An RNA of 177 nucleotides, treated with DMS and 2A3 and read out base by base. DMS adducts were read by reverse transcription with MarathonRT. For 2A3 the reverse transcriptase was SuperScript II with manganese.
RNA sequence: GGGAACGACUCGAGUAGAGUCGAAAACCAGCUUCCACUCUUUCGCUCACACGCACGGCGCCUCCCCCACAGUUCUCCGAUUCCAAUUUUCCGCAAGGAAUGUCAUCGCGACCGCCCCGCCGGUGUCCACUCUAUAAAUCUUCGGAUUUAUAGAGUGAAAAGAAACAACAACAACAAC
Reactivity to DMS in 0.01 (KOAc 150mM, MgCl2 10mM, bicine 150mM(pH8.5), 24C), signal-to-noise 5, nucleotides 027 to 126: c030c000a160g000c060u000u000c030c020a070c080u000c060u000u010u010c070g020c040u000c040a100c090a100c120g020c050a070c080g010g000c050g020c020c010u000c020c020c020c000c020a100c140a080g020u000u000c010u000c020c030g010a120u000u000c030c040a070a100u010u000u000u000c020c010g000c200a080a150g000g010a030a020u010g010u000c040a040u000c050g000c050g010a090c060c060g000c030c020c010c030g010c030c010g010g020u000g010u000c080
Reactivity to 2A3 in 0.01 (KOAc 150mM, MgCl2 10mM, bicine 150mM(pH8.5), 24C), signal-to-noise 1, nucleotides 027 to 126: c000c000a010g000c020u050u000c030c030a100c050u090c030u050u190u140c060g000c030u020c010a080c000a010c060g070c000a010c000g020g050c030g030c000c000u020c000c000c020c010c000a050c020a010g010u020u020c030u000c020c000g030a020u070u050c030c000a020a030u100u040u050u000c010c000g030c090a030a000g030g020a030a020u040g020u020c020a040u060c050g020c010g040a040c000c000g010c020c040c010c000g030c030c000g030g000u010g000u000c020

Description: It was measured as part of the RMDB library RFMREP. Conditions: 150 mM KOAc, 10 mM MgCl2 and 150 mM bicine (pH 8.5), 24 C.